Description: An RNA of 177 nucleotides, treated with 2A3 and DMS and read out base by base. Values cover nucleotides 27 to 126. In probing experiments dimethyl sulfate is read out at A N1 and C N3, which are open when not base-paired. DMS adducts were read by reverse transcription with MarathonRT. The RNA was probed in 150 mM KOAc, 10 mM MgCl2 and 150 mM bicine (pH 8.5) at 24 C.

RNA sequence: GGGAACGACUCGAGUAGAGUCGAAAAGGAUACGAGCUUCCAAGGCAUCUUGGAGGUUGGAAAGCUCCGGCGGUGAAGGAUGAGCCCGCGGCCUAUCAGCUUGUUGGUGAGGUAAUGGCUCACCAAGAAUUUAAUUAAAAUUCGUUUUAAUUAAAUUAAAAGAAACAACAACAACAAC
Reactivity to 2A3 in 0.01 (KOAc 150mM, MgCl2 10mM, bicine 150mM(pH8.5), 24C), signal-to-noise 6, nucleotides 027 to 126: g060g000a030u080a190c060g020a020g010c010u010u000c000c020a020a020g100g000c140a120u110c190u020u010g010g000a010g020g010u040u050g030g030a100a060a020g010c010u010c020c010g040g000c030g000g050u100g060a100a030g070g040a090u100g020a010g060c000c000c010g020c010g020g030c000c010u080a130u140c040a010g070c060u090u140g040u050u040g050g000u010g000a000g000g020u040a080a010u050g040g020c000u000c000a000c000c000a000a010g030
Reactivity to DMS in 0.01 (KOAc 150mM, MgCl2 10mM, bicine 150mM(pH8.5), 24C), signal-to-noise 4, nucleotides 027 to 126: g010g010a070u020a090c070g010a060g000c000u000u010c000c010a010a010g000g030c250a120u030c020u000u000g000g010a020g000g000u000u010g010g010a110a090a140g010c090u000c030c040g020g010c040g000g010u020g010a120a100g000g010a100u010g010a130g020c050c020c040g000c060g000g010c020c020u000a050u040c080a090g000c090u010u010g010u000u000g010g020u000g000a020g000g010u000a100a080u010g010g010c000u000c000a010c000c000a030a050g000